[RMDB]
RNA sequence: GGGAACGACUCGAGUAGAGUCGAAAAGGGCUAAGCUGCAUGCCGUGGUUCCUGCCACCACGUAAAACAGGUAGGGAAAACACAACUGCCAACAACGAAUUGGCACUCGCUGCUUAAUUAAAAGCAGCCGUCUUCCCAAGUUCUGCUCUGAGGCUUGCAUCUUCCUCGUGUUCGCACGAGGAAGAUGAAAAGAAACAACAACAACAAC
Reactivity to 2A3 in 0.01 (KOAc 150mM, MgCl2 10mM, bicine 150mM(pH8.5), 24C), signal-to-noise 2, nucleotides 027 to 156: g030g010g000c020u090a050a000g030c010u050g020c090a060u100g050c020c010g010u000g000g000u120u090c010c000u030g010c000c000a140c010c000a010c030g200u180a000a000a020a000c030a020g030g010u040a010g010g030g030a020a030a070a000c120a030c010a110a090c090u070g010c000c000a010a010c010a050a080c110g040a140a160u030u020g000g010c000a030c040u020c040g000c000u050g000c000u060u000a120a080u120u140a120a300a040a030g000c000a000g000c020c000g000u000c000u030u050c000c010c020a030a030g000u070u060c060u020g000c010u020c030u120g000a010g000g010c000u000u040g020